[RMDB]
This 177-nucleotide RNA was probed chemically with DMS. The reactions ran in a buffer of 150 mM KOAc, 10 mM MgCl2 and 150 mM bicine (pH 8.5), at 24 C. For DMS the reverse transcriptase was MarathonRT. For DMS, 1,359 sequencing reads were counted. It was measured as part of the RMDB library TTRINS.

RNA sequence: GGGAACGACUCGAGUAGAGUCGAAAAGAUAUGGAAUGUGGAGUAUGUAUUUCAGCGUUGAAAGAACACGAGCUUCGGAAACGAAGCUCGUGUUCUGGAGCUGAAUAUGAAACACAUUCCUAAGUCAGUCUUAUAAAAUGUUCGCAUUUUAUAAGACAAAAGAAACAACAACAACAAC
Reactivity to DMS in 0.01 (KOAc 150mM, MgCl2 10mM, bicine 150mM(pH8.5), 24C), signal-to-noise 2, nucleotides 027 to 126: g020a020u000a300u020g020g010a010a030u000g000u000g000g060a180g000u000a090u000g010u000a000u020u000u000c000a010g030c010g000u000u010g010a200a190a040g010a060a020c000a000c020g020a020g000c010u000u010c020g080g000a130a080a280c000g040a040a020g050c000u010c000g010u000g000u000u000c000u000g000g000a100g020c010u000g000a020a000u000a000u010g000a230a210a190c000a010c010a000u000u000c000c000u010a040a100g000u000c030a110